This 177-nucleotide RNA was probed chemically with 2A3 and DMS. The 2A3 profile rests on 1,632 reads. Conditions: 150 mM KOAc, 10 mM MgCl2 and 150 mM bicine (pH 8.5), 24 C. The data come from the RNA Mapping Database (RMDB), library OK2TST. For DMS the reverse transcriptase was MarathonRT.

RNA sequence: GGGAACGACUCGAGUAGAGUCGAAAAACAGAGGAGCUGUGUGGCUUGACCCUCCUCGGAAUCUGCAGUGUGGCUGGCUCUGUGUGCUUCCUGUAUUGAUUCCAUGACUCACGGAGCAUGAGCUAAGACAACAGGGACGAUUCGUCGUCCCUGUUGUAAAAGAAACAACAACAACAAC
Reactivity to 2A3 in 0.01 (KOAc 150mM, MgCl2 10mM, bicine 150mM(pH8.5), 24C), signal-to-noise 2, nucleotides 027 to 126: a000c020a010g030a030g000g020a000g060c100u040g010u030g040u060g220g090c070u080u120g030a100c000c020c020u000c000c030u010c000g000g010a030a050u000c020u090g030c010a060g010u070g020u060g220g000c040u020g050g000c000u050c020u060g050u020g000u040g030c010u040u000c000c000u030g010u060a130u010u210g190a150u100u000c040c010a010u070g020a030c000u000c010a000c020g020g010a020g000c040a070u110g050a010g020c020u080a080a030g120
Reactivity to DMS in 0.01 (KOAc 150mM, MgCl2 10mM, bicine 150mM(pH8.5), 24C), signal-to-noise 2, nucleotides 027 to 126: a080c070a130g000a050g010g010a020g020c180u010g010u000g000u000g020g000c080u000u000g010a130c060c190c000u000c010c020u000c010g000g020a040a050u010c030u000g000c080a070g000u020g020u010g010g000c010u010g010g000c000u020c030u000g020u000g020u000g000c080u020u010c030c020u000g010u000a270u010u000g000a140u000u000c090c020a110u000g010a080c060u000c010a040c070g010g010a050g000c030a130u000g000a030g000c020u000a090a060g000